[RMDB]
RNA sequence: GGGAACGACUCGAGUAGAGUCGAAAACGAGGUGCGGUAGGCCUCGUUAACAAACCGCAGAAAAAUAGUCGCAAACGACGAAAACUACGCACUCGCAGCUUAAUAACCUGCGCUGAGCCCUUCUCCCAAAACUGAGGUAGGUUCGCCUACCUCAGAAGAAGUUGAUACCCUUCGGGGUAUCAACUUCAAAAGAAACAACAACAACAAC
Reactivity to 2A3 in 0.01 (KOAc 150mM, MgCl2 10mM, bicine 150mM(pH8.5), 24C), signal-to-noise 1, nucleotides 027 to 156: c000g000a000g040g000u090g010c050g040g010u040a040g060g010c000c000u000c010g060u020u080a000a000c010a010a090a010c010c000g020c050a020g150a030a090a000a010a010u140a050g000u010c070g030c150a140a090a090c100g050a000c010g030a010a090a030a020c070u110a040c000g010c040a090c010u000c020g000c010a000g000c000u020u080a020a030u070a100a090c000c000u020g020c030g040c150u060g000a060g000c010c020c000u110u000c010u070c000c020c000a050a030a030a110c000u000g000a000g010g000u000a000g000g000u050u100c100g040c030c000u020a000c000c000u000c000a000g000a000a000